This 177-nucleotide RNA was probed chemically with 2A3 and DMS.
RNA sequence: GGGAACGACUCGAGUAGAGUCGAAAAGUAGUGGCAGGUGAAUAGGGAUUGAGAUAAAGUACGCGCGUAUGCGCAUCGAAACGGCGCAGUACAGCUUCCUCCGCGCCUGCACGGGCGAUGCGCACGAUAGCCCUACUGGAUUCGUCCAGUAGGGCUAAAAAGAAACAACAACAACAAC
Reactivity to 2A3 in 0.01 (KOAc 150mM, MgCl2 10mM, bicine 150mM(pH8.5), 24C), signal-to-noise 1, nucleotides 027 to 126: g080u070a040g030u010g090g000c010a020g070g080u060g100a200a060u150a170g000g020g020a020u110u110g080a120g010a070u140a110a150a030g010u040a020c010g010c000g020c000g040u090a060u140g030c000g000c000a010u030c000g020a050a110a030c190g050g000c040g040c050a040g000u050a010c050a020g000c000u000u020c000c010u050c000c020g020c030g000c060c000u000g000c040a000c000g040g000g000c010g000a000u040g010c000g000c010a000c060g030a020
Reactivity to DMS in 0.01 (KOAc 150mM, MgCl2 10mM, bicine 150mM(pH8.5), 24C), signal-to-noise 2, nucleotides 027 to 126: g030u030a070g050u010g020g010c010a070g020g020u010g000a110a070u020a090g010g010g010a090u000u000g000a100g010a080u010a090a110a150g010u000a050c040g020c030g040c040g010u020a090u010g020c010g010c000a000u010c020g010a050a060a080c150g000g000c030g040c000a060g010u000a010c110a090g000c050u000u000c020c040u000c080c070g000c040g000c060c000u000g000c090a060c090g000g000g020c020g000a020u000g010c010g010c000a090c240g000a120

It was measured as part of the RMDB library OK2TRN.